[RMDB]
RNA sequence: GGGAACGACUCGAGUAGAGUCGAAAAGGACACAGGUGUUCUCGACUGUCUGGUGAAGAUAGUCGAACAGGAAGGUCCAGCCGGACUGUUCAGAGGCAUGACCUCCAAACUCCUCAGCACAGUCCUCCAUCUGGGGUAAUUUCGAUUACCCCAGAUGAAAAGAAACAACAACAACAAC
Reactivity to DMS in 0.01 (KOAc 150mM, MgCl2 10mM, bicine 150mM(pH8.5), 24C), signal-to-noise 6, nucleotides 027 to 126: g020g010a020c020a070c080a160g010g030u000g000u000u010c130u010c040g010a020c000u000g020u000c000u010g010g030u030g000a240a010g010a000u000a000g020u000c000g010a020a010c060a040g010g020a180a190g020g000u000c020c040a140g020c080c070g020g000a050c010u010g000u010u010c060a090g000a030g000g000c300a150u010g000a100c070c030u000c060c080a050a100a130c130u000c020c000u000c040a080g000c150a030c020a030g000u000c000c000u010c090
Reactivity to 2A3 in 0.01 (KOAc 150mM, MgCl2 10mM, bicine 150mM(pH8.5), 24C), signal-to-noise 4, nucleotides 027 to 126: g010g000a010c030a000c020a150g180g150u040g040u140u090c090u010c070g010a000c000u010g010u010c000u040g120g090u300g090a010a000g000a010u020a010g000u010c010g010a000a010c010a000g070g030a100a060g030g010u030c020c000a000g070c030c030g010g020a010c020u030g020u090u090c020a050g010a010g040g000c090a110u140g090a210c000c050u020c030c020a010a060a090c030u010c000c010u000c020a000g020c030a010c000a000g010u010c000c000u000c020